[RMDB]
RNA sequence: GGGAACGACUCGAGUAGAGUCGAAAAAUGCUGUACAGUGAAGCCCGGAUUCUGUGUGUGCUGCGUUUGCUGAUUUGCCAUACACAUAAAUAUACGUAGCACCACAUGAUUCGGCUUCGUGGUGCUACGGAUGUCAUCCCUUCGGGGAUGACAUCCGAAAAGAAACAACAACAACAAC
Reactivity to DMS in 0.01 (KOAc 150mM, MgCl2 10mM, bicine 150mM(pH8.5), 24C), signal-to-noise 3, nucleotides 027 to 126: a100u000g020c070u000g020u000a070c050a150g030u000g000a050a030g010c120c040c030g020g010a010u000u000c180u010g010u000g000u020g010u000g020c030u010g000c010g010u000u000u010g010c190u010g000a140u000u000u000g020c100c130a090u000a120c170a100c090a040u030a040a070a080u010a080u000a060c010g040u000a010g000c000a020c000c010a000c000a030u000g010a050u000u000c050g000g000c000u000u000c020g010u020g010g020u000g000c030u000a110
Reactivity to 2A3 in 0.01 (KOAc 150mM, MgCl2 10mM, bicine 150mM(pH8.5), 24C), signal-to-noise 3, nucleotides 027 to 126: a010u120g040c030u020g010u050a040c010a060g040u020g050a020a020g030c080c060c010g000g010a030u070u010c010u010g030u020g020u010g000u010g040c010u020g000c010g030u000u120u100g070c080u070g110a300u050u070u210g070c060c040a090u120a170c090a030c020a080u200a070a150a000u190a010u010a040c000g000u000a000g000c000a010c010c010a000c000a000u000g000a010u010u010c000g000g000c000u020u000c000g000u000g020g010u010g030c020u030a060